[RMDB]
RNA sequence: GGGAACGACUCGAGUAGAGUCGAAAAGACAGCUACUAGCUUGGCUCAUGCUCGUAAUGCUGCUGAUAGAUUGAAUGACGAGAUUGAACAAAGUCAACGCUCUAGCACGUUCAUUGGUCGCUUAAAGGAUAGUUUUAAACGUUUAGGAAGUGAAGUCUAAACUGGAGUGGUUCGCCACUCCAGUUUAAAAAGAAACAACAACAACAAC
Reactivity to 2A3 in 0.01 (KOAc 150mM, MgCl2 10mM, bicine 150mM(pH8.5), 24C), signal-to-noise 1, nucleotides 027 to 156: g050a000c010a010g000c000u000a000c020u020a030g030c000u000u010g070g000c030u030c110a020u080g000c000u030c030g010u010a020a000u060g030c030u000g030c010u030g040a040u040a140g140a080u110u160g060a140a050u050g020a060c060g000a010g000a020u090u040g060a070a100c100a090a100a070g010u110c070a060a020c070g010c010u000c010u000a020g000c030a020c120g020u050u000c030a010u040u070g000g000u020c000g000c040u100u160a060a000a020g080g000a010u050a070g020u000u010u000u110a140a090a020c030g020u000u000u080a010g020g070a000a010g000u010g100a050a070g030u000c000
Reactivity to DMS in 0.01 (KOAc 150mM, MgCl2 10mM, bicine 150mM(pH8.5), 24C), signal-to-noise 1, nucleotides 027 to 156: g000a110c050a040g020c020u010a090c070u000a100g050c020u000u010g060g040c000u020c030a090u020g030c020u000c020g030u000a070a090u000g030c030u000g010c070u010g000a140u010a070g000a120u020u000g010a090a070u020g030a060c010g000a070g040a160u010u010g040a100a120c030a060a070a080g030u000c010a040a040c060g020c020u000c050u010a100g020c020a100c050g040u000u000c000a110u010u010g010g030u000c030g010c040u010u000a060a100a070g040g020a090u000a060g000u020u000u000u000a020a020a060c040g000u000u000u000a140g000g010a020a060g010u000g020a050a090g000u010c040

This 207-nucleotide RNA was probed chemically with 2A3 and DMS.
2A3 adducts were read by reverse transcription with SuperScript II with manganese.
The data come from the RNA Mapping Database (RMDB), library OK3TST.